The record gives the reactivity of an RNA of 207 nucleotides to 2A3.
Source: RMDB library ARCHII, as collected in RNAgym.
RNA sequence: GGGAACGACUCGAGUAGAGUCGAAAACGGUCCAUAAUGUGGCAGGCACCGCGUGAGGCUGGCUUCACAGAGCAGCGACAACUGCCCGCUUCCAACGGUGGAAGGAUAACGGGCCGCUGCACUCCUAGGCCGCUUGGGCCUCCGUAGCCUACUCCAGGAAAGAAACAUCGUUCGCGAUGUUUCUUUCAAAAGAAACAACAACAACAAC
Reactivity to 2A3 in 0.01 (KOAc 150mM, MgCl2 10mM, bicine 150mM(pH8.5), 24C), signal-to-noise 3, nucleotides 027 to 156: c070g030g030u010c010c000a030u120a130a110u160g030u100g040g000c040a010g010g000c000a010c110c140g030c080g030u290g040a000g010g000c100u080g020g000c000u070u060c080a040c020a080g020a010g020c000a000g000c000g070a050c090a230a100c100u080g000c000c000c000g000c010u010u000c020c030a140a140c170g220g160u180g070g020a000a010g010g000a070u070a170a060c000g000g000g000c010c000g000c000u000g000c010a020c040u050c010c020u050a050g000g000c010c040g100c070u080u170g060g020g000c020c000u000c000c000g010u010a020g000c000c000u030a010c020u000c020c040a050g000